An RNA of 177 nucleotides, treated with 2A3 and DMS and read out base by base. Conditions: 150 mM KOAc, 10 mM MgCl2 and 150 mM bicine (pH 8.5), 24 C. DMS adducts were read by reverse transcription with MarathonRT. Values cover nucleotides 27 to 126. 2A3 adducts were read by reverse transcription with SuperScript II with manganese.

RNA sequence: GGGAACGACUCGAGUAGAGUCGAAAAGAUAUGGACAUUCGCGCUUUUGACGAAGCUACUCGGAAACGAGGUCUUCGAUAAGCGUUCGUGUCCUAAGUCAAAAGCACGACACUUCGGUGUCGUGCAAGUUUCAGGUGAUCUUCGGAUCACCUGAAACAAAAGAAACAACAACAACAAC
Reactivity to 2A3 in 0.01 (KOAc 150mM, MgCl2 10mM, bicine 150mM(pH8.5), 24C), signal-to-noise 1, nucleotides 027 to 126: g010a010u030a020u100g020g000a000c010a010u020u000c030g060c040g000c060u170u140u140u300g130a130c020g000a000a010g010c010u290a300c030u000c010g030g040a100a100a030c010g000a000g020g050u020c000u010u000c000g120a110u010a210a040g000c000g000u000u010c010g000u030g000u000c010c000u000a070a030g040u030c050a030a000a030a030g020c030a000c000g000a010c030a000c000u040u070c260g200g000u000g000u020c000g010u000g000c000a010a000
Reactivity to DMS in 0.01 (KOAc 150mM, MgCl2 10mM, bicine 150mM(pH8.5), 24C), signal-to-noise 1, nucleotides 027 to 126: g000a040u020a300u000g000g010a040c020a000u000u000c180g050c050g010c000u020u000u010u000g020a200c140g020a030a010g030c140u000a180c020u000c000g000g000a160a050a140c000g020a000g000g000u000c040u000u000c000g000a080u000a000a000g010c000g000u000u000c150g010u000g000u000c030c010u020a080a110g000u010c040a040a050a120a080g010c020a020c010g000a010c030a020c000u000u000c180g040g040u000g020u000c000g000u000g000c000a000a000
High 2A3 reactivity points to a flexible backbone, as in loops and unpaired stretches.